Structure probing data (2A3) for a 207-nucleotide construct. The RNA was probed in 150 mM KOAc, 10 mM MgCl2 and 150 mM bicine (pH 8.5) at 24 C.
[RMDB]
RNA sequence: GGGAACGACUCGAGUAGAGUCGAAAAUUUGUUCGGUAUUGUACCACCGUUAUCGGGCUAAACUUGUAGUUGCAAAUGACAACUAUGCGGAAGCUCGUCUCGCUGCUUAAUUGCGGUGUGACACUUCACAUUAAGCCCUAGAGGGUCGCACUUCUAGCCAUUUGCAAACGUUCGCGUUUGCAAAUGGAAAAGAAACAACAACAACAAC
Reactivity to 2A3 in 0.01 (KOAc 150mM, MgCl2 10mM, bicine 150mM(pH8.5), 24C), signal-to-noise 2, nucleotides 027 to 156: u130u030u090g070u030u050c060g010g040u080a070u040u170g010u050a070c000c040a000c020c000g180u160u020a040u060c010g000g030g000c000u030a170a000a040c090u110u180g040u060a010g010u000u000g000c070a070a160a300u190g060a290c000a010a010c010u010a000u050g050c110g070g000a000a000g010c080u100c100g080u010c020u030c010g000c060u020g020c010u000u170a110a100u300u050g000c010g000g010u020g010u000g020a000c000a010c040u020u000c000a040c000a080u060u040a120a030g000c040c000c000u000a020g010a130g000g020g000u050c080g020c020a050c030u050u050c010u010a070g040